[RMDB]
RNA sequence: GGGAACGACUCGAGUAGAGUCGAAAACGGACUUAAAGCGAUUGCUGAAUAACACAGUAAUAGACGUAGUUUCUACUGGGAUACCUAACGGUAGUCGCUUUAGGUCUAUUAUGUGAAACUACGUCAGGGUACACAAUCAUUUCGAUGGUUGUGUACCAAAAGAAACAACAACAACAAC
Reactivity to 2A3 in 0.01 (KOAc 150mM, MgCl2 10mM, bicine 150mM(pH8.5), 24C), signal-to-noise 9, nucleotides 027 to 126: c040g010g010a000c010u020u010a000a000a000g010c000g010a010u040u080g070c050u080g090a190a130u260a220a040c110a010c020a080g080u120a080a150u090a250g000a000c000g000u010a000g000u000u010u020c110u070a090c050u080g040g020g060a030u040a070c000c030u060a150a030c050g010g000u010a010g010u010c000g000c000u010u000u010a000g000g000u000c000u000a000u000u060a040u090g240u030g010a000a000a000c000u000a000c010g010u010c010a010g100
Reactivity to DMS in 0.01 (KOAc 150mM, MgCl2 10mM, bicine 150mM(pH8.5), 24C), signal-to-noise 7, nucleotides 027 to 126: c080g000g000a010c000u000u000a000a010a000g010c000g000a010u000u020g000c120u010g000a160a090u030a130a160c150a080c060a020g000u010a070a150u040a080g000a010c010g000u000a000g000u010u000u000c000u000a040c060u020g000g000g020a100u010a010c020c040u010a110a130c260g010g010u000a010g000u000c000g020c000u000u000u000a000g000g010u000c000u000a020u020u030a040u040g030u020g010a010a000a010c000u000a000c000g000u000c010a180g010

This 177-nucleotide RNA was probed chemically with 2A3 and DMS. The data come from the RNA Mapping Database (RMDB), library OK1LIB. The RNA was probed in 150 mM KOAc, 10 mM MgCl2 and 150 mM bicine (pH 8.5) at 24 C. Values are in units of 0.01, from 0 to 300, in steps of 10. Values cover nucleotides 27 to 126. For 2A3, 36,777 sequencing reads were counted. 2A3 adducts were read by reverse transcription with SuperScript II with manganese.